[RMDB]
RNA sequence: GGGAACGACUCGAGUAGAGUCGAAAACUUCAGUCCUCUAGUCGAAGGACUUCGAAGCUGAAGUCAGGAUCGAGAAGGACUCUCUAGUCGAGAGAAGCUGAUCCUGACUAGUCUCGAAGCUCUGAUCCUCUGAAGGAUCAGCUUCGACUCUAGUCGAUGUUCUUAGAGCCUUCGGGCUCUAAGAACAAAAAGAAACAACAACAACAAC
Reactivity to 2A3 in 0.01 (KOAc 150mM, MgCl2 10mM, bicine 150mM(pH8.5), 24C), signal-to-noise 1, nucleotides 027 to 156: c090u180u100c010a070g030u050c000c000u000c070u030a030g070u070c000g030a140a020g030g010a060c050u000u010c030g020a040a040g010c010u070g070a130a000g060u010c030a000g010g000a000u000c050g200a010g070a300a190g150g060a120c000u030c000u010c020u090a280g190u300c110g040a000g050a030g030a080a070g060c000u000g000a000u000c030c000u000g000a000c000u000a000g000u010c000u010c020g000a000a000g010c030u000c030u060g070a080u020c020c000u020c080u180g090a280a000g020g010a010u000c010a020g010c010u000u000c000g000a000c020u000c000u010a090g050u080c050g070a140